[RMDB]
Source information
This 177-nucleotide RNA was probed chemically with DMS and 2A3. For 2A3 the reverse transcriptase was SuperScript II with manganese. The RNA was probed in 150 mM KOAc, 10 mM MgCl2 and 150 mM bicine (pH 8.5) at 24 C. For DMS the reverse transcriptase was MarathonRT. The data come from the RNA Mapping Database (RMDB), libraries RFM100 and RFMREP.
RNA sequence: GGGAACGACUCGAGUAGAGUCGAAAAAAGUAGCGGUUUGAGCGAUGUGUAUAGACAGUAACCCGGUAAAAUGUACUGAAAAUAGGGAUAAGAGUUGAACAGGUGCAAAGUGAAUAAGUAAAUUGUGCGUUUAGUUAUCCUUCGGGAUAACUAAACGAAAAGAAACAACAACAACAAC
Reactivity to DMS in 0.01 (KOAc 150mM, MgCl2 10mM, bicine 150mM(pH8.5), 24C), signal-to-noise 4, nucleotides 027 to 126: a080a060g000u010a050g020c070g000g010u000u010u020g020a120g000c140g010a070u000g020u020g010u010a060u020a070g000a110c050a070g010u000a120a090c040c010c000g000g040u040a040a080a050a080u010g010u020a030c040u000g000a050a030a080a080u000a070g000g000g000a090u010a040a080g000a080g000u010u010g000a080a080c100a020g010g000u010g000c050a020a050a090g010u000g010a060a040u020a040a080g000u010a040a040a170u030u000g010u020g000
Reactivity to 2A3 in 0.01 (KOAc 150mM, MgCl2 10mM, bicine 150mM(pH8.5), 24C), signal-to-noise 2, nucleotides 027 to 126: a000a000g130u110a020g000c010g050g020u000u030u190g010a050g040c090g020a020u020g060u000g010u000a020u080a140g040a010c000a010g020u070a060a030c060c000c000g000g000u100a090a150a030a060u070g020u030a010c060u060g030a000a060a150a090u140a010g000g020g000a000u000a180a030g070a090g040u070u090g060a010a050c030a030g070g000u050g070c070a010a020a070g040u050g040a090a080u200a200a030g110u040a020a070a190u100u060g000u020g000